The data come from the RNA Mapping Database (RMDB), library OK1LIB. Structure probing data (2A3) for a 177-nucleotide construct. For 2A3, 300 sequencing reads were counted. Conditions: 150 mM KOAc, 10 mM MgCl2 and 150 mM bicine (pH 8.5), 24 C.
[RMDB]
RNA sequence: GGGAACGACUCGAGUAGAGUCGAAAAUUGCAAUUUCUUUUUUAGAAUGGAUUGGAGAUAAUCCAAAGAACACACCUCUUGCAUAAGGGUCAAGAUGAGGAGUUCUUUCUCCCAUCAUAUAUGGUAAAUGACUGGACCCAUUCGUGGGUCCAGUCAUAAAAGAAACAACAACAACAAC
Reactivity to 2A3 in 0.01 (KOAc 150mM, MgCl2 10mM, bicine 150mM(pH8.5), 24C), signal-to-noise 1, nucleotides 027 to 126: u130u110g020c000a000a080u030u000u000c020u050u020u000u000u040u190a190g050a150a120u090g080g000a060u040u040g130g000a030g000a000u300a040a000u250c060c030a100a000a000g000a000a000c100a000c000a000c050c000u020c000u090u090g000c000a030u130a190a160g300g060g000u200c000a000a010g010a100u090g070a020g130g000a000g100u020u000c000u000u000u090c000u000c000c050c000a050u050c050a000u080a050u050a020u160g300g020u250a030a280